The record gives the reactivity of an RNA of 207 nucleotides to DMS and 2A3. The DMS profile rests on 5,369 reads. The 2A3 profile rests on 2,439 reads.
RNA sequence: GGGAACGACUCGAGUAGAGUCGAAAAAUUCUCCAAAAACACAGAAAUAUUCUGACACAUGAGGGAGAGAAUCAGGAAUUGUUUGAGAUGGCAUGUGAGGAACAGAAAUAUGAUAUAGUUUUAUGGAUAGGACAAACCCUAAUGUUAGAUGAGCCGAUCAUAAUCGAUAUUUCGAUAUCGAUUAUGAAAAAGAAACAACAACAACAAC
Reactivity to DMS in 0.01 (KOAc 150mM, MgCl2 10mM, bicine 150mM(pH8.5), 24C), signal-to-noise 3, nucleotides 027 to 156: a140u000u010c010u000c010c080a030a050a110a120a070c040a150c050a110g010a070a150a120u010a080u010u010c020u010g010a140c080a090c050a060u000g020a110g020g020g020a130g000a060g020a070a050u020c070a060g020g020a070a120u010u000g000u010u000u000g010a130g020a130u000g000g010c070a030u000g010u000g010a180g030g010a050a090c050a070g000a050a060a080u000a030u020g010a090u010a110u000a100g000u010u000u010u000a080u000g000g030a100u000a060g010g000a090c050a050a030a090c050c020c010u000a020a050u020g000u000u000a110g020a070u000g010a100g010c020c040g000a160
Reactivity to 2A3 in 0.01 (KOAc 150mM, MgCl2 10mM, bicine 150mM(pH8.5), 24C), signal-to-noise 4, nucleotides 027 to 156: a000u050u010c010u000c000c000a020a030a020a080a020c080a020c030a060g160a060a140a000u190a130u070u030c020u030g070a040c010a000c020a070u100g010a060g040g070g010a030g000a000g030a060a030u070c030a030g080g060a120a080u100u080g090u070u150u120g050a070g000a030u050g060g000c060a040u030g030u030g040a040g020g030a050a040c010a020g090a060a080a010u180a050u080g020a010u030a020u030a170g020u020u000u020u070a120u080g000g020a040u070a040g020g000a010c030a040a100a110c000c000c000u040a090a070u090g040u060u050a060g010a090u080g030a040g060c060c040g020a020